[RMDB]
RNA sequence: GGGAACGACUCGAGUAGAGUCGAAAAGGGGUCGCAGCAAUGAUGGGUACAACAGCAUCGAUCUACACUGAAGCCUCCACGGUGUAGGGAGCUGUGUACCUUGAGCUGCGACGGAGGCACCCAAAGUUAGAAGUUAACUUCGGUUAACUUCUAACAAUCCACUAGAGUACUUCGGUACUCUAGUGGAAAAAGAAACAACAACAACAAC
Reactivity to 2A3 in 0.01 (KOAc 150mM, MgCl2 10mM, bicine 150mM(pH8.5), 24C), signal-to-noise 2, nucleotides 027 to 156: g050g000g090g010u010c000g000c000a000g030c020a060a300u020g000a010u020g010g010g000u000a010c040a250a090c000a270g000c000a010u300c090g010a000u030c010u000a000c010a010c010u050g000a060a020g000c000c000u000c000c000a000c000g000g000u010g010u000a000g010g000g000a010g000c020u000g010u030g000u040a000c020c010u000u000g000a000g000c000u000g000c010g000a000c010g000g000a000g000g000c000a040c000c000c000a000a070a000g010u000u000a000g000a010a000g000u000u000a000a010c000u010u070c130g000g010u000u010a000a000c000u000u010c020u000a000a000c000a000a030

Conditions: 150 mM KOAc, 10 mM MgCl2 and 150 mM bicine (pH 8.5), 24 C. Chemical mapping of a 207-nucleotide RNA with 2A3. It was measured as part of the RMDB library RNAMAK. Values cover nucleotides 27 to 156.